[RMDB]
RNA sequence: GGGAACGACUCGAGUAGAGUCGAAAAAACUCAGCUAGGGAGAGUAUAACAUUCAUGUAGACGAGACCUAGACGAAACACAGAGGAAAAUUAUUAAUCACUGGAUAGUAUUAGUAAUGACUCUGUGUAAAACUCUUCUACGUUCGCGUAGAAGAGAACUUUUUAUUGAUGUUCGCAUCAAUAAAAAGAAAAGAAACAACAACAACAAC
Reactivity to 2A3 in 0.01 (KOAc 150mM, MgCl2 10mM, bicine 150mM(pH8.5), 24C), signal-to-noise 4, nucleotides 027 to 156: a000a000c010u010c010a020g010c010u020a000g000g030g010a030g020a030g040u130a160u060a300a010c030a040u110u180c110a090u220g100u250a060g040a110c030g030a020g030a060c000c000u010a030g010a050c030g020a000a060a000c000a000c000a000g020a000g010g030a100a080a130a000u000u000a000u000u010a010a000u020c040a000c040u050g100g040a120u300a300g000u000a000u000u000a010g010u000a000a000u000g030a010c000u000c000u000g000u000g000u010a000a000a000a000c000u000c000u020u000c000u010a020c000g020u030u040c200g000c010g050u000a000g000a000a000g000a000g010a000a000
Reactivity to DMS in 0.01 (KOAc 150mM, MgCl2 10mM, bicine 150mM(pH8.5), 24C), signal-to-noise 2, nucleotides 027 to 156: a100a060c030u000c030a070g020c010u000a020g000g000g000a250g000a300g000u010a030u010a090a070c050a140u000u000c120a090u000g040u010a090g030a120c040g000a210g000a070c000c010u000a050g000a250c040g000a110a070a040c010a010c010a010g000a050g040g000a120a070a080a030u000u000a000u000u000a010a040u000c110a050c030u000g040g010a160u000a100g000u000a010u000u000a020g030u000a010a000u000g000a170c000u010c000u010g020u000g010u010a000a000a040a100c000u000c000u000u000c010u000a000c000g020u020u020c300g020c050g040u000a010g020a020a010g020a030g020a040a010